The data come from the RNA Mapping Database (RMDB), library OK1LIB. An RNA of 177 nucleotides, treated with 2A3 and read out base by base. The RNA was probed in 150 mM KOAc, 10 mM MgCl2 and 150 mM bicine (pH 8.5) at 24 C.
[RMDB]
RNA sequence: GGGAACGACUCGAGUAGAGUCGAAAACUACAAGACCAUUUACCAAAUCUGGACCUGCGGGAGAGUUUCCCAACUUUCUUCGAUAUAAGACAGAAGUUUGUCGUGGUUUGAGGUCUAAUUUUAAAGAAGCCUAAUCGUCGUUCGCGACGAUUAGGCUAAAAGAAACAACAACAACAAC
Reactivity to 2A3 in 0.01 (KOAc 150mM, MgCl2 10mM, bicine 150mM(pH8.5), 24C), signal-to-noise 1, nucleotides 027 to 126: c110u170a020c020a050a000g000a040c000c000a020u280u120u000a080c050c050a000a000a210u020c010u130g000g000a000c000c040u020g000c040g010g020g010a000g050a000g000u130u040u000c000c000c000a000a000c000u000u060u080c020u280u300c080g090a090u040a050u060a220a090g000a000c000a050g010a220a180g020u000u080u040g040u010c040g000u060g080g000u000u000u220g060a050g090g000u000c000u000a000a300u000u140u190u030a080a300a130g080a240